[RMDB]
RNA sequence: GGGAACGACUCGAGUAGAGUCGAAAACGUCGUUGCCGUCGCUGUCGUUUCCGGCAUGUGACCCGCAAGAGAGCUUCAAGGAUGGCAUGACGAUGGGGUGGGGCGUCGUUGCCGCGAUGGUGGCGGCGCGGCAUAGGAAAUUCGUUUCCUAUGCCGCAAAAGAAACAACAACAACAAC
Reactivity to DMS in 0.01 (KOAc 150mM, MgCl2 10mM, bicine 150mM(pH8.5), 24C), signal-to-noise 8, nucleotides 027 to 126: c090g020u000c060g020u010u000g010c000c010g030u000c010g020c020u000g010u000c020g010u000u000u000c150c040g020g010c080a070u010g010u010g000a100c030c030c030g010c130a100a100g000a110g010a220g000c040u010u000c080a120a120g000g010a090u000g010g010c030a060u010g000a040c050g000a090u000g010g000g010g010u000g010g010g000g000c050g010u010c030g010u000u000g020c010c010g000c050g010a040u000g000g020u000g000g000c010g010g010c010
Reactivity to 2A3 in 0.01 (KOAc 150mM, MgCl2 10mM, bicine 150mM(pH8.5), 24C), signal-to-noise 9, nucleotides 027 to 126: c030g090u030c030g060u070u140g010c010c010g010u010c000g000c020u020g010u020c010g010u010u100u070c050c000g000g010c040a030u080g040u050g090a090c010c010c020g050c050a100a020g100a010g010a020g150c020u110u080c110a090a060g110g020a090u090g040g000c040a040u090g030a020c030g020a040u080g020g030g010g030u080g010g020g010g000c030g020u040c010g040u040u050g000c000c000g000c010g010a000u030g000g030u010g010g000c000g000g000c010